[RMDB]
RNA sequence: GGGAACGACUCGAGUAGAGUCGAAAACAACUGGAGGAGCGAAGGUUAACAAAACUACUUAAAGCAUUCACAAUUGAGCUACUUCUUCUUGACAUUCCAGUAAUAGUUGAAUUGGCAUUGCUUUAAAGGUGAUGCCUAUAUUCGUAUAGGCAUCACCAAAAGAAACAACAACAACAAC
Reactivity to 2A3 in 0.01 (KOAc 150mM, MgCl2 10mM, bicine 150mM(pH8.5), 24C), signal-to-noise 3, nucleotides 027 to 126: c010a000a040c000u060g050g030a070g030g010a040g030c060g070a060a040g090g040u170u180a130a000c040a030a130a070a080c070u240a030c050u050u100a000a010a010g000c000a040u030u060c060a010c020a150a110u050u110g040a030g000c010u030a020c040u030u030c000u060u020c020u080u130g020a080c040a140u170u030c020c000a010g010u050a000a070u020a040g000u000u040g040a020a010u000u000g000g120c140a020u050u040g000c000u010u020u040a030a020a000
Reactivity to DMS in 0.01 (KOAc 150mM, MgCl2 10mM, bicine 150mM(pH8.5), 24C), signal-to-noise 2, nucleotides 027 to 126: c060a090a100c080u030g000g000a000g060g000a020g030c290g000a140a110g000g020u000u010a090a160c130a030a080a130a050c070u000a050c100u000u000a020a010a010g000c010a000u000u040c290a070c050a020a010u000u060g000a050g000c000u010a040c080u000u050c030u000u000c060u040u030g020a120c110a080u030u040c090c010a010g000u000a050a120u010a000g010u000u000g020a000a040u010u000g030g000c150a020u000u000g050c000u000u000u020a000a060a200
Annotation
The data come from the RNA Mapping Database (RMDB), library OK1LIB. Structure probing data (2A3 and DMS) for a 177-nucleotide construct. For DMS, 2,271 sequencing reads were counted.